Structure probing data (DMS) for a 177-nucleotide construct. For DMS, 895 sequencing reads were counted. The reactions ran in a buffer of 150 mM KOAc, 10 mM MgCl2 and 150 mM bicine (pH 8.5), at 24 C.
RNA sequence: GGGAACGACUCGAGUAGAGUCGAAAAAGCUUAAAUUGGAAUUGGUGAAAAUGCUGGGACCAGCGGGCUUGUUUGGGAUUGAGUUUCCUGGAAGUUUUCAGGGCUUCUAAAUUUUUGUGAUCAGUCCGGAUAGGAAGGUAUUCGUACCUUCCUAUCCAAAAGAAACAACAACAACAAC
Reactivity to DMS in 0.01 (KOAc 150mM, MgCl2 10mM, bicine 150mM(pH8.5), 24C), signal-to-noise 1, nucleotides 027 to 126: a080g000c030u010u010a050a060a110u010u000g000g000a120a110u010u000g020g010u000g000a060a120a160a130u000g000c080u000g040g020g020a120c150c050a030g020c100g010g010g000c080u010u010g000u000u010u020g020g000g000a090u000u010g000a070g010u000u000u010c000c000u010g000g000a020a080g000u000u010u000u000c180a040g000g010g000c080u000u000c040u010a020a010a140u000u000u010u020u000g010u010g000a090u000c100a060g000u000c110c060
Notes
The data come from the RNA Mapping Database (RMDB), library OK2TST.